About this RNA: An RNA of 177 nucleotides, treated with DMS and 2A3 and read out base by base. Reactivities are given for positions 27 through 126. Values are in units of 0.01, from 0 to 300, in steps of 10. For 2A3 the reverse transcriptase was SuperScript II with manganese. DMS adducts were read by reverse transcription with MarathonRT. For DMS, 2,323 sequencing reads were counted. Source: RMDB library TTRDES, as collected in RNAgym.

RNA sequence: GGGAACGACUCGAGUAGAGUCGAAAAGAUAUGGAAUUCACCGAAGGGCGACGAUCAGAGCUCGGAAACGAGCUCUGGGAGCCUUAGGUGAGAUUCCUAAGUCAAAAGGUAGUCUUCGGACUACCAAGUUACAGAUCUACUUCGGUAGAUCUGUAACAAAAGAAACAACAACAACAAC
Reactivity to DMS in 0.01 (KOAc 150mM, MgCl2 10mM, bicine 150mM(pH8.5), 24C), signal-to-noise 2, nucleotides 027 to 126: g010a020u000a300u020g000g000a030a060u000u000c000a000c000c010g000a300a300g000g010g000c000g000a060c260g000a030u000c000a000g000a010g040c010u000c000g010g000a030a050a200c010g010a020g000c000u010c000u000g000g000g000a040g020c020c010u000u000a070g000g010u000g000a040g000a070u000u000c000c000u010a070a150g000u000c050a060a080a150a150g000g000u000a010g000u000c010u010u020c250g030g000a010c000u000a000c000c000a040a030
Reactivity to 2A3 in 0.01 (KOAc 150mM, MgCl2 10mM, bicine 150mM(pH8.5), 24C), signal-to-noise 2, nucleotides 027 to 126: g000a020u090a040u110g020g000a000a000u050u010c000a000c010c020g050a200a240g120g010g020c040g020a300c010g010a090u020c000a000g010a000g010c010u010c000g030g000a030a030a030c020g000a000g000c030u040c010u010g000g000g010a010g040c000c030u030u020a010g000g000u000g000a000g010a000u020u000c010c000u030a130a020g040u040c050a040a040a150a130g010g000u000a010g000u000c030u060u100c300g120g000a000c000u020a000c000c010a010a000